The record gives the reactivity of an RNA of 170 nucleotides to DMS and 2A3. The data come from the RNA Mapping Database (RMDB), library 15KLIB. Conditions: 150 mM KOAc, 10 mM MgCl2 and 150 mM bicine (pH 8.5), 24 C.
[RMDB]
RNA sequence: GGGAACGACUCGAGUAGAGUCGAAAAUCCUACAUGGUUUAAUGCGUUGCGUGACUUUACGUUAAAGGGUUAUGUUCUUGCUACCAUUAUUGUGUUUCUGUGUGCUGUACUGAUGUAUUUGUGUUUAAGAGUAAUCCCUUCGGGGAUUACAAAAGAAACAACAACAACAAC
Reactivity to DMS in 0.01 (KOAc 150mM, MgCl2 10mM, bicine 150mM(pH8.5), 24C), signal-to-noise 2, nucleotides 027 to 129: u020c030c010u040a000c000a060u030g030g030u010u070u000a040a110u000g000c110g020u000u000g020c070g000u000g030a080c060u030u010u020a090c090g050u000u030a040a070a080g000g000g000u030u000a000u000g020u010u030c040u000u000g060c040u010a060c020c010a060u040u030a200u020u020g000u030g010u000u010u020c020u020g030u020g010u040g040c020u030g000u020a020c000u000g030a060u000g040u050a080u040u020u000g000u030g000u040u020u030a060a050g000a300
Reactivity to 2A3 in 0.01 (KOAc 150mM, MgCl2 10mM, bicine 150mM(pH8.5), 24C), signal-to-noise 4, nucleotides 027 to 129: u000c000c000u040a020c060a090u160g040g090u050u060u150a110a030u080g040c050g030u000u050g010c020g070u080g040a100c020u090u060u110a090c060g050u060u160a130a080a040g050g030g030u030u080a110u060g020u080u040c040u030u160g030c020u000a040c000c000a010u050u110a080u200u150g020u010g010u000u000u000c020u040g050u000g050u040g030c010u010g000u000a050c000u040g010a040u010g040u040a160u040u070u010g140u030g050u020u070u030a080a050g080a000
For DMS the reverse transcriptase was MarathonRT. For 2A3, 3,727 sequencing reads were counted.